[RMDB]
RNA sequence: GGGAACGACUCGAGUAGAGUCGAAAAAUGUUGUGUUUGCAUAUAGUUCGGGAAACCGAACUUGAGUAACAAUUUGUUACUCAUUUACUUCCUGUAUAUUAUUAAACCGAUUUGGUUAAAUCGCCGCUCGAGGAUUGUAAUUCGUUACAAUCCUCGAAAAAGAAACAACAACAACAAC
Reactivity to DMS in 0.01 (KOAc 150mM, MgCl2 10mM, bicine 150mM(pH8.5), 24C), signal-to-noise 2, nucleotides 027 to 126: a060u000g020u000u000g030u000g000u000u000u010g000c100a100u000a050u000a030g020u000u010c000g000g000g000a100a110a200c030c050g010a010a000c030u000u000g000a050g000u000a000a010c010a200a190u020u020u030g000u000u000a000c000u000c020a060u010u010u020a080c150u000u000c020c030u010g000u010a020u040a110u010u020a030u010u010a030a080a090c120c000g000a150u010u020u010g010g010u040u010a040a040a100u000c060g000c070c060g030c230
Reactivity to 2A3 in 0.01 (KOAc 150mM, MgCl2 10mM, bicine 150mM(pH8.5), 24C), signal-to-noise 2, nucleotides 027 to 126: a010u060g000u000u000g000u000g020u070u010u080g020c020a060u110a030u030a110g000u000u010c000g000g000g040a050a010a000c020c000g010a090a000c000u000u020g000a000g000u020a000a040c080a110a300u020u030u300g000u000u000a000c010u030c000a000u000u020u040a070c050u030u000c000c010u000g070u050a200u000a020u010u130a050u030u160a110a040a050c000c000g050a080u020u030u250g000g010u050u040a020a050a000u120c040g000c010c020g060c000